[RMDB]
RNA sequence: GGGAACGACUCGAGUAGAGUCGAAAACUUUCCUCUACCCACUGCUCGAGGGCCUCCUCCCUCGCCUUCGAGCCGGGUCUUGCAUCGGGUUGGCUCAUCCUGAGACCGGGGAGCUUCGACGAUCUCUCAAACUCGCACUUCGGUGCGAGUAAAAGAAACAACAACAACAAC
Reactivity to DMS in 0.01 (KOAc 150mM, MgCl2 10mM, bicine 150mM(pH8.5), 24C), signal-to-noise 2, nucleotides 027 to 129: c130u000u000u000c060c000u020c010u050a000c000c000c000a100c170u000g030c040u050c030g060a050g000g000g000c000c190u060c020c010u010c060c020c000u010c220g000c030c020u040u060c050g010a000g050c020c160g090g000g080u010c040u090u080g010c110a000u020c050g020g030g020u040u000g010g030c070u000c040a050u000c050c020u050g020a020g030a080c090c030g030g030g020g000a080g070c100u030u040c060g030a000c010g000a070u020c100u040c000u000c150a100a170
Reactivity to 2A3 in 0.01 (KOAc 150mM, MgCl2 10mM, bicine 150mM(pH8.5), 24C), signal-to-noise 3, nucleotides 027 to 129: c030u040u030u000c010c000u000c060u090a070c010c000c040a060c110u140g000c000u000c000g000a050g000g000g000c000c010u100c010c000u070c000c000c000u050c030g010c030c000u030u020c000g000a030g000c000c000g000g000g000u010c030u090u130g010c030a040u030c030g020g000g000u040u010g030g000c010u020c010a160u110c010c030u040g050a060g080a100c040c050g000g000g000g000a010g020c000u110u110c070g060a050c020g060a130u030c020u000c000u020c070a070a030